[RMDB]
RNA sequence: GGGAACGACUCGAGUAGAGUCGAAAAUGACGCGGAGGCACACGAAUGAGCACACACAAACCCGGACUUGACGUUAGCGAACUCCUCGGCGACGACGGCACGGUUGACCAUAGCGUUAUCAAGAGCCUCACGAACGCCGACGCGGGCGGUGGCACGCGUCCGCGUGGACAUUCGUGUCCACGCGGACAAAAGAAACAACAACAACAAC
Reactivity to 2A3 in 0.01 (KOAc 150mM, MgCl2 10mM, bicine 150mM(pH8.5), 24C), signal-to-noise 3, nucleotides 027 to 156: u110g060a030c020g010c000g060g020a040g040g020c020a040c000a000c130g070a060a070u130g020a040g000c050a010c020a010c010a010c050a140a040a040c010c010c010g030g010a030c060u050u080g020a020c050g020u060u060a060g010c000g040a060a050c020u050c050c000u000c030g050g010c000g010a030c020g010a040c020g020g000c010a020c060g070g000u070u080g040a030c020c010a050u120a050g040c070g040u040u050a080u140c020a040a090g010a020g100c000c010u030c000a090c020g030a100a020c050g010c000c030g030a030c040g000c030g010g020g000c020g030g000u030g020g000c050a020c060g040c030
Reactivity to DMS in 0.01 (KOAc 150mM, MgCl2 10mM, bicine 150mM(pH8.5), 24C), signal-to-noise 2, nucleotides 027 to 156: u000g000a080c070g000c030g040g010a180g030g050c010a100c020a130c060g020a100a070u020g020a100g030c030a120c050a070c050a070c040a010a120a110c030c020c040g030g020a090c040u000u000g010a040c020g000u010u010a080g020c040g010a100a050c000u010c020c060u000c020g020g010c000g050a190c050g010a100c060g040g000c020a050c080g000g040u000u000g010a070c030c020a080u000a090g020c000g000u000u000a080u000c050a040a080g010a140g010c040c010u000c040a050c000g000a050a050c030g010c000c020g000a060c040g010c020g010g000g010c050g020g010u020g010g010c020a090c000g000c110

The data come from the RNA Mapping Database (RMDB), library OK3TST. The record gives the reactivity of an RNA of 207 nucleotides to 2A3 and DMS. For DMS the reverse transcriptase was MarathonRT. 2A3 adducts were read by reverse transcription with SuperScript II with manganese. For DMS, 3,165 sequencing reads were counted. Values are in units of 0.01, from 0 to 300, in steps of 10.